[RMDB]
Source: RMDB library OK1LIB, as collected in RNAgym. This 177-nucleotide RNA was probed chemically with 2A3. The reactions ran in a buffer of 150 mM KOAc, 10 mM MgCl2 and 150 mM bicine (pH 8.5), at 24 C.
RNA sequence: GGGAACGACUCGAGUAGAGUCGAAAAGCAGUGCGUACCGGGUGGCGUUGAACAGCUUGGUACCGAAGUUGCGCGACGCGCGGACGUGAUCCUCUCCUAUAGCCAGAUCACCACCGGGGCUGGAGCCACUCGAUCCGGUCUUCGGACCGGAUCGAGUAAAAGAAACAACAACAACAAC
Reactivity to 2A3 in 0.01 (KOAc 150mM, MgCl2 10mM, bicine 150mM(pH8.5), 24C), signal-to-noise 2, nucleotides 027 to 126: g000c040a050g040u140g040c040g010u070a180c120c080g100g110g040u040g040g000c120g010u050u130g070a140a010c010a000g000c000u010u000g010g120u170a180c000c010g040a080a000g020u010u000g000c000g010c000g120a100c090g000c030g030c020g040g000a000c000g000u000g060a040u000c060c050u000c000u010c010c010u080a210u140a260g040c050c040a040g040a300u050c020a110c130c000a040c120c100g070g020g010g000c030u000g000g010a020g000c020c000